Structure probing data (2A3 and DMS) for a 177-nucleotide construct. The 2A3 profile rests on 6,494 reads. Source: RMDB library M2PK50, as collected in RNAgym.
[RMDB]
RNA sequence: GGGAACGACUCGAGUAGAGUCGAAAAGAUUGCGGCUUCGGCCGCAAUCAAACGACUACCCGUCAGGGUUAAGGCCAUACGGACAGCCGGGUCCACUGCCGAAAAUCUCCAACUUCGGUUGGAGAAAGCUUUCAUAUAUGUUCGCAUAUAUGAAAGCAAAAGAAACAACAACAACAAC
Reactivity to 2A3 in 0.01 (KOAc 150mM, MgCl2 10mM, bicine 150mM(pH8.5), 24C), signal-to-noise 4, nucleotides 027 to 126: g000a000u000u000g010c000g010g020c040u060u140c300g120g000c000c010g000c000a010a010u000c000a000a000a000c010g030a010c010u040a040c010c010c000g050u060c100a110g060g020g000u080u140a150a130g100g000c000c010a050u070a090c020g020g020a020c040a040g040c020c020g030g000g000u000c000c010a050c060u060g010c020c010g070a060a020a000a060u020c000u000c000c000a010a020c010u030u070c220g090g000u000u000g000g000a000g000a030a010a000
Reactivity to DMS in 0.01 (KOAc 150mM, MgCl2 10mM, bicine 150mM(pH8.5), 24C), signal-to-noise 4, nucleotides 027 to 126: g000a010u000u000g030c020g000g010c020u000u030c190g030g050c000c010g000c000a000a000u000c010a030a120a230c070g010a020c030u000a060c040c000c000g020u010c270a060g000g000g020u000u010a060a060g010g020c030c050a060u000a070c080g000g010a100c070a110g000c040c020g010g000g010u000c010c100a070c120u000g000c010c030g010a110a060a060a150u000c000u000c000c000a000a000c000u000u010c150g000g010u000u000g000g000a010g000a010a040a090
High DMS reactivity at an A or C suggests that its Watson-Crick edge is free. Reactivities are given for positions 27 through 126.